[RMDB]
RNA sequence: GGGAACGACUCGAGUAGAGUCGAAAAGAUAUGGAUUCAGCUUUUGACGUUCCUAUAUCGGAAACGAUAUAUGAACGAUAAGCUGAUCCUAAGUCAAAACCAAUAGCCGGUUCGCCGGCUAUUGGAACGUAUCACAUGCGUUCGCGCAUGUGAUACGAAAAGAAACAACAACAACAAC
Reactivity to DMS in 0.01 (KOAc 150mM, MgCl2 10mM, bicine 150mM(pH8.5), 24C), signal-to-noise 1, nucleotides 027 to 126: g010a060u000a300u010g000g010a010u010u010c000a000g110c000u000u000u000u000g060a140c170g000u000u010c010c060u000a000u000a000u000c000g000g000a110a090a100c020g000a040u000a000u010a000u000g010a040a040c000g000a070u000a020a010g000c000u000g000a010u000c010c000u010a020a110g000u000c010a110a070a190a100c010c000a020a010u010a010g000c010c000g010g040u000u010c220g030c000c000g010g010c000u000a000u000u000g000g000a020a050
Reactivity to 2A3 in 0.01 (KOAc 150mM, MgCl2 10mM, bicine 150mM(pH8.5), 24C), signal-to-noise 1, nucleotides 027 to 126: g040a020u090a030u100g000g000a040u300u230c000a000g000c040u170u100u090u240g270a180c090g000u000u030c000c000u000a000u000a000u000c010g000g070a020a020a070c010g040a000u000a000u010a010u040g010a010a000c040g030a020u000a040a010g000c000u000g020a000u000c010c000u020a110a010g020u000c040a030a060a160a200c010c010a000a000u000a000g070c000c000g090g040u070u120c300g160c170c050g000g020c010u000a000u000u000g000g000a010a000